[RMDB]
Source: RMDB library OK3TST, as collected in RNAgym. Structure probing data (2A3) for a 207-nucleotide construct.
RNA sequence: GGGAACGACUCGAGUAGAGUCGAAAAAAGAGGCAACAAGUGCUUGCUAAUCACUUGAAUAUACAUAAUUAGCUGCAGUCUGGUGCACUGGAUUCUUUGUAGAACCAUAACAAUACUGAUUGGCAAAUGCACAUAACAAUAGAUGUGUCACCAUAUAAGUUGUUACGGAGUUCGCUCCGUAACAACUAAAAGAAACAACAACAACAAC
Reactivity to 2A3 in 0.01 (KOAc 150mM, MgCl2 10mM, bicine 150mM(pH8.5), 24C), signal-to-noise 2, nucleotides 027 to 156: a000a000g130a030g000g040c030a050a020c020a160a000g020u000g020c010u070u070g030c010u030a010a000u000c030a030c090u040u010g030a130a060u220a060u020a090c020a060u190a020a070u080u030a030g030c020u030g000c030a020g110u040c010u150g020g040u050g030c050a010c020u040g030g030a090u070u000c000u020u140u120g030u050a000g030a090a070c010c000a020u050a230a000c000a060a000u060a140c030u030g050a030u010u000g000g000c000a000a050a090u100g020c000a000c030a010u130a080a000c020a080a060u120a120g060a000u080g050u030g020u070c010a000c040c000a010u070a050u050a250
The 2A3 profile rests on 786 reads.
Values are in units of 0.01, from 0 to 300, in steps of 10.
The reactions ran in a buffer of 150 mM KOAc, 10 mM MgCl2 and 150 mM bicine (pH 8.5), at 24 C.